Background:
The record gives the reactivity of an RNA of 177 nucleotides to 2A3 and DMS. For 2A3 the reverse transcriptase was SuperScript II with manganese. Values cover nucleotides 27 to 126. For DMS, 1,575 sequencing reads were counted. Source: RMDB library OK1LIB, as collected in RNAgym. The reactions ran in a buffer of 150 mM KOAc, 10 mM MgCl2 and 150 mM bicine (pH 8.5), at 24 C. The 2A3 profile rests on 7,321 reads.

[RMDB]
RNA sequence: GGGAACGACUCGAGUAGAGUCGAAAAGCACGUCGUUACGACGACGUGCAAGAAAACAAAAGGAGUGGUGAUGCCAGACCACAAUGAAUCAAACUGGCAAAAAGCAUGGUGGUACGCCACCAUGCAAGCUAGUACUGGGUUUCGACCCAGUACUAGCAAAAGAAACAACAACAACAAC
Reactivity to 2A3 in 0.01 (KOAc 150mM, MgCl2 10mM, bicine 150mM(pH8.5), 24C), signal-to-noise 5, nucleotides 027 to 126: g000c000a000c000g010u000c010g010u020u030a090c300g040a000c000g000a000c000g080u000g000c000a000a000g010a000a080a010a020c120a010a090a050a010g240g050a180g020u000g000g000u030g030a060u100g020c000c000a000g000a010c010c020a000c030a010a140u270g030a020a000u110c040a050a030a050c000u000g000g000c010a000a050a010a050a000g000c000a000u000g000g010u000g000g010u020a020c270g040c030c000a000c000c000a000u000g010c000a000a000
Reactivity to DMS in 0.01 (KOAc 150mM, MgCl2 10mM, bicine 150mM(pH8.5), 24C), signal-to-noise 1, nucleotides 027 to 126: g030c000a000c000g000u000c000g020u010u010a300c300g010a070c000g000a000c000g120u000g110c000a020a130g000a010a180a180a050c010a180a000a110a130g020g050a190g000u000g000g000u060g000a120u030g000c000c000a000g000a050c050c020a000c000a030a080u080g000a020a090u050c260a000a020a050c000u000g020g090c000a000a060a040a220a000g020c040a000u000g000g000u000g000g010u100a220c240g040c000c000a000c000c000a000u000g070c000a020a000